Structure probing data (DMS and 2A3) for a 177-nucleotide construct. Reactivities are given for positions 27 through 126. For 2A3 the reverse transcriptase was SuperScript II with manganese. The RNA was probed in 150 mM KOAc, 10 mM MgCl2 and 150 mM bicine (pH 8.5) at 24 C.

[RMDB]
RNA sequence: GGGAACGACUCGAGUAGAGUCGAAAAACGGAGGUUACGACCUCCGAGCACUGGGGUGUGUUCCCACCUUCUGAUGUUGUUUAGUCAUGUGAUACAACAUCCCAGGGCGGGGCACAUCCCAGGCUAACCGUAUGAAUGCUUUCGAGCAUUCAUACGGAAAAGAAACAACAACAACAAC
Reactivity to DMS in 0.01 (KOAc 150mM, MgCl2 10mM, bicine 150mM(pH8.5), 24C), signal-to-noise 2, nucleotides 027 to 126: a240c010g000g000a010g020g020u000u030a130c210g000a090c000c000u000c010c000g000a000g000c020a110c000u000g000g000g010g040u000g050u000g010u020u050c000c000c000a100c010c000u000u000c180u000g000a010u000g000u000u010g000u000u010u020a100g010u000c180a170u050g020u020g000a050u010a020c020a000a000c000a030u010c000c040c200a030g000g010g010c090g000g010g010g000c010a000c000a000u000c010c000c000a000g010g000c000u000a080a130
Reactivity to 2A3 in 0.01 (KOAc 150mM, MgCl2 10mM, bicine 150mM(pH8.5), 24C), signal-to-noise 9, nucleotides 027 to 126: a000c010g000g010a010g020g020u080u100a060c210g060a030c050c000u000c000c000g000a010g010c140a210c050u000g000g000g000g000u010g000u010g010u300u300c000c000c000a020c000c000u040u020c050u040g000a000u000g010u020u010g060u060u110u130a190g060u100c150a190u250g200u260g130a030u060a090c000a000a000c000a010u010c030c020c020a010g010g000g000c030g000g000g000g010c000a000c000a000u000c000c000c000a000g000g000c000u030a060a030